Overview
An RNA of 177 nucleotides, treated with 2A3 and read out base by base. The 2A3 profile rests on 308 reads.
RNA sequence: GGGAACGACUCGAGUAGAGUCGAAAAGAAGAGAGGAAGAUUUAGGGGAAGAAGAUAACAAUAUUCACGCGGUCUUCCCUGUUACGUGUGUAGACACUAUGAUUGUUAUCAAAACUAAAUAUGAGAACCGAGCACUACGAUUCGUCGUAGUGCUCGGAAAAGAAACAACAACAACAAC
Reactivity to 2A3 in 0.01 (KOAc 150mM, MgCl2 10mM, bicine 150mM(pH8.5), 24C), signal-to-noise 1, nucleotides 027 to 126: g130a000a000g130a020g040a000g000g090a070a000g000a100u090u140u000a000g000g000g020g090a020a020g000a060a060g000a040u000a080a000c000a000a100u010a130u300u000c080a000c000g010c040g000g000u000c000u020u030c000c000c010u020g040u000u150a090c000g000u000g000u000g090u090a000g110a140c010a070c120u000a170u300g010a030u000u000g000u090u000a090u040c000a020a020a020a020c040u070a010a000a120u200a090u300g190a190g020a000a000